[RMDB]
RNA sequence: GGGAACGACUCGAGUAGAGUCGAAAAUCAUCGAGACCUAUGGCGAUCUCGACCACAACGCCUUGCUCGAAACGGUCUAUGAAAAGUAUCCGUCCUAUGCUCGAAAAAGCCGCCUGCGCAAGCGUGGCCUUCCCUCGUUUUUCGAAACGAGGGAAGGAAAAGAAACAACAACAACAAC
Reactivity to DMS in 0.01 (KOAc 150mM, MgCl2 10mM, bicine 150mM(pH8.5), 24C), signal-to-noise 2, nucleotides 027 to 126: u010c130a180u000c010g020a000g010a050c030c020u000a110u000g030g030c060g010a050u000c020u000c020g000a180c070c050a110c120a100a100c020g000c080c010u000u000g030c040u000c020g000a110a090a170c070g000g030u000c020u000a150u010g060a120a070a080a050g010u000a040u010c080c010g000u020c010c010u000a110u000g020c020u000c050g000a040a120a030a150a110g010c030c010g000c030c060u000g000c100g000c080a070a050g000c070g000u020g000g000
Reactivity to 2A3 in 0.01 (KOAc 150mM, MgCl2 10mM, bicine 150mM(pH8.5), 24C), signal-to-noise 2, nucleotides 027 to 126: u080c010a030u040c030g020a010g020a070c010c030u130a200u200g150g000c060g090a190u020c010u020c050g040a050c020c030a080c050a110a040c040g000c020c000u020u040g010c010u010c050g050a050a060a050c020g030g010u000c020u060a140u170g120a050a060a000a030g030u050a040u040c030c020g050u050c030c010u040a030u070g030c000u010c020g020a150a020a010a050a000g030c030c000g000c010c050u130g000c030g010c040a040a020g020c010g060u040g020g020
The record gives the reactivity of an RNA of 177 nucleotides to DMS and 2A3. The 2A3 profile rests on 2,477 reads. The DMS profile rests on 1,240 reads.